[RMDB]
RNA sequence: GGGAACGACUCGAGUAGAGUCGAAAAAUUAAGGCGAUCUUUAGCGGCCACAAAGGUUGCACGCAUGGCCUCAGGAUGGCGUAGAUGGUAAAUAUCUUCGGCCGCAUGAUACAUAGCUCUAGCAAUGGGAUUCAUUACUUCGCGUUCAUCUAAUAUCAACUAGAACAGUAUUCGUACUGUUCUAGUUAAAAGAAACAACAACAACAAC
Reactivity to DMS in 0.01 (KOAc 150mM, MgCl2 10mM, bicine 150mM(pH8.5), 24C), signal-to-noise 4, nucleotides 027 to 156: a150u000u000a050a070g020g010c010g030a060u000c050u000u000u000a090g030c010g030g020c010c020a140c110a070a060a130g020g010u000u000g030c020a080c080g000c070a070u000g020g000c020c010u010c060a160g010g030a080u000g000g020c040g020u000a060g020a070u000g010g010u000a050a100a110u010a060u000c050u000u000c050g050g010c000c000g060c020a160u000g010a080u000a040c040a140u000a120g010c030u000c050u000a040g030c040a050a040u000g000g020g000a170u000u000c020a050u000u000a040c030u000u000c020g010c020g010u000u000c040a070u000c030u020a090a090u010a110u010c060
Reactivity to 2A3 in 0.01 (KOAc 150mM, MgCl2 10mM, bicine 150mM(pH8.5), 24C), signal-to-noise 5, nucleotides 027 to 156: a000u170u100a070a010g040g000c020g010a020u010c010u050u070u060a050g020c020g020g020c020c010a050c090a030a110a010g040g010u020u020g030c060a030c110g090c060a040u060g080g030c000c010u050c040a060g000g080a040u050g020g010c020g020u060a110g030a110u090g020g060u080a070a120a040u140a080u040c050u130u120c040g020g000c010c000g000c000a010u050g020a010u030a050c070a020u120a040g020c020u060c070u110a020g020c050a040a130u080g020g000g040a020u070u060c020a020u070u080a030c010u050u080c040g010c020g070u110u140c020a030u000c040u080a050a040u150a100u300c050